[RMDB]
Source information:
The record gives the reactivity of an RNA of 177 nucleotides to DMS and 2A3. Source: RMDB library TTRDES, as collected in RNAgym. For 2A3 the reverse transcriptase was SuperScript II with manganese. The DMS profile rests on 10,547 reads.
RNA sequence: GGGAACGACUCGAGUAGAGUCGAAAAAAAGAUAUGGAACGGUGGGCAGUCGCACCGAGAGGGAGCUCGGAAACGAGCUCCUCCCCACCUCGGUGAACUACGACGAUGCACCGUUCCUAAGUCAAAACAAUACUGGUAUGUUCGCAUACCAGUAUUGAAAAGAAACAACAACAACAAC
Reactivity to DMS in 0.01 (KOAc 150mM, MgCl2 10mM, bicine 150mM(pH8.5), 24C), signal-to-noise 7, nucleotides 027 to 126: a070a060a090g000a020u000a110u000g000g000a010a010c010g010g030u010g010g010g000c190a200g020u010c010g030c010a010c010c000g010a020g000a180g020g000g000a020g020c000u000c000g000g000a010a020a060c010g010a020g020c000u000c010c000u000c060c010c000c020a300c110c020u000c000g020g000u000g000a080a040c140u030a240c050g020a050c000g010a230u010g020c010a020c010c000g010u000u000c000c000u000a010a070g000u010c020a080a060a090a170
Reactivity to 2A3 in 0.01 (KOAc 150mM, MgCl2 10mM, bicine 150mM(pH8.5), 24C), signal-to-noise 4, nucleotides 027 to 126: a000a010a030g020a010u030a010u070g000g000a000a010c010g010g000u040g050g240g050c160a100g070u020c010g010c040a000c000c000g000a000g010a000g020g020g000a000g000c000u000c000g010g000a010a010a000c000g000a000g000c000u000c000c000u010c000c000c000c000a020c000c000u000c000g010g000u010g010a080a060c120u280a080c300g090a010c020g010a020u170g060c000a000c000c000g010u000u000c000c000u000a010a000g000u000c010a000a040a060a120